[RMDB]
RNA sequence: GGGAACGACUCGAGUAGAGUCGAAAAGAGGUUACAGUCUCAGGGGGGAGUACGUUCGCAAGAGUGAAACUUAAAGAAAUUGACGGAAUGGCACCACAAGACGUGGAGCGUGCGGUUUAAUUUGACUCAACACGGGGAACUUUACCAGAUCCGGACAGUUGUCUAAGUGGUUCGCCACUUAGACAACAAAAGAAACAACAACAACAAC
Reactivity to 2A3 in 0.01 (KOAc 150mM, MgCl2 10mM, bicine 150mM(pH8.5), 24C), signal-to-noise 1, nucleotides 027 to 156: g030a000g050g010u090u060a120c040a010g050u010c010u090c160a150g010g000g000g000g000g010a000g010u040a020c020g020u000u060c000g000c040a050a020g080a010g020u120g000a050a100a000c030u050u100a190a020a000g090a060a050a070u200u070g020a070c000g000g060a030a000u070g080g000c010a040c060c000a010c070a050a150g030a050c050g020u010g000g040a060g080c010g020u020g010c040g030g000u010u140u000a010a040u140u100u160g010a030c010u000c120a120a030c040a050c030g030g000g010g000a020a050c000u050u020u040a110c050c000a000g020a090u050c050c000g050g020a030c020a020
The record gives the reactivity of an RNA of 207 nucleotides to 2A3. Values are in units of 0.01, from 0 to 300, in steps of 10. The RNA was probed in 150 mM KOAc, 10 mM MgCl2 and 150 mM bicine (pH 8.5) at 24 C. Reactivities are given for positions 27 through 156. The data come from the RNA Mapping Database (RMDB), library PDB130.